Conditions: 150 mM KOAc, 10 mM MgCl2 and 150 mM bicine (pH 8.5), 24 C.
Structure probing data (DMS and 2A3) for a 177-nucleotide construct.
For 2A3 the reverse transcriptase was SuperScript II with manganese.
RNA sequence: GGGAACGACUCGAGUAGAGUCGAAAAGAUAUGGACUGACCCAGAUAUUAGCAUGCGUUGAAAUCGGAAACGAUGGAGCAUGAAAAAAUUCUGCAGUCCUAAGUCAAAAGAGAGCUUCGGCUCUCAAGACUAAUGUUGGGUUCGCCCAACAUUAGUCAAAAGAAACAACAACAACAAC
Reactivity to DMS in 0.01 (KOAc 150mM, MgCl2 10mM, bicine 150mM(pH8.5), 24C), signal-to-noise 2, nucleotides 027 to 126: g000a040u000a300u010g000g020a000c000u000g010a150c240c300c040a040g000a000u000a040u000u000a130g000c000a000u000g000c000g000u000u000g000a060a140a000u000c000g020g000a120a140a200c000g000a000u000g000g000a160g000c000a000u000g000a010a020a000a020a100a090u000u000c000u000g030c000a000g000u000c010c000u000a070a020g000u020c020a040a070a110a220g000a010g000a020g010c010u000u000c180g010g000c000u000c000u010c000a010a040
Reactivity to 2A3 in 0.01 (KOAc 150mM, MgCl2 10mM, bicine 150mM(pH8.5), 24C), signal-to-noise 1, nucleotides 027 to 126: g040a010u110a030u080g000g000a000c020u020g150a190c080c090c040a000g010a020u240a070u040u210a040g120c000a020u020g000c020g300u300u050g110a140a150a000u010c000g020g040a080a000a030c000g010a010u020g060g020a000g050c000a000u000g000a110a090a030a000a000a000u080u000c010u030g000c000a020g070u010c000c010u050a100a030g020u020c010a020a010a240a110g010a030g000a000g000c010u080u050c300g240g000c010u030c030u000c000a000a020

Record summary:
It was measured as part of the RMDB library TTRDEL.